[RMDB]
RNA sequence: GGGAACGACUCGAGUAGAGUCGAAAAGAAAGGGCGAUGAUGAUCAAUGCUUAAUUUCUGACACCUCUUGUAUGAGAAGAGCUUGAUAACCUCUUCUUUGAGCACAUUAUGCAAUACUCUGAGCCAACGAUACCUUGUAUUUCGAUACAAGGUAUCGAAAAGAAACAACAACAACAAC
Reactivity to DMS in 0.01 (KOAc 150mM, MgCl2 10mM, bicine 150mM(pH8.5), 24C), signal-to-noise 9, nucleotides 027 to 126: g010a040a050a050g020g000g000c010g000a130u010g020a100u020g010a110u000c100a070a090u010g010c000u000u000a070a080u000u000u010c030u010g010a130c160a100c150c030u000c060u010u000g010u010a070u020g000a010g010a010a000g000a010g000c010u000u010g020a070u050a130a100c300c000u000c000u000u000c000u000u000u000g010a090g010c050a050c180a060u010u010a060u010g020c020a060a040u010a060c080u000c020u010g010a200g010c040c040a070a190
Reactivity to 2A3 in 0.01 (KOAc 150mM, MgCl2 10mM, bicine 150mM(pH8.5), 24C), signal-to-noise 9, nucleotides 027 to 126: g070a020a040a010g060g000g010c040g040a070u060g010a050u060g030a040u120c060a080a050u080g010c010u040u080a060a030u100u100u050c060u060g050a040c020a080c080c010u030c040u090u150g110u110a120u220g030a010g000a020a000g000a000g000c010u050u050g020a020u070a050a010c000c000u000c000u000u000c000u010u020u070g040a020g000c040a020c010a080u020u140a050u180g000c020a030a030u030a130c020u010c020u060g020a020g020c010c010a040a020